[RMDB]
RNA sequence: GGGAACGACUCGAGUAGAGUCGAAAACGGGUGUUUGUCUGAAUGCUCUAUAGAUAGUGAAACAGGUGAUAUCGGCGCAUCGACUACGUGCCUGUCUCGGCUACGAUCAGCCGGGGUGCAUGUGCCAAGUGUGUGUUGGUUUCGACCAGCACGCGCUAAAAGAAACAACAACAACAAC
Reactivity to DMS in 0.01 (KOAc 150mM, MgCl2 10mM, bicine 150mM(pH8.5), 24C), signal-to-noise 9, nucleotides 027 to 126: c070g010g000g020u000g010u000u000u000g010u010c070u020g010a090a080u010g000c140u000c030u010a120u030a080g000a090u020a050g010u010g010a090a070a080c070a040g000g010u000g010a090u020a060u010c070g000g000c040g010c040a030u010c060g010a100c130u020a050c070g020u000g000c010c070u000g000u010c010u000c000g000g010c010u000a100c270g010a120u030c150a030g010c000c000g000g000g000g010u010g010c080a020u000g000u000g010c020c030a090
Reactivity to 2A3 in 0.01 (KOAc 150mM, MgCl2 10mM, bicine 150mM(pH8.5), 24C), signal-to-noise 9, nucleotides 027 to 126: c020g010g010g000u030g020u010u040u040g240u050c100u130g050a060a030u040g010c000u000c010u020a080u040a100g140a060u060a040g140u120g140a070a060a020c020a020g000g040u040g050a070u060a040u190c050g010g000c010g000c010a020u020c040g060a060c040u110a040c070g060u060g010c000c010u030g010u010c000u000c000g000g000c010u050a060c110g210a170u140c080a000g000c000c000g000g000g000g000u020g000c010a010u030g010u020g010c000c020a020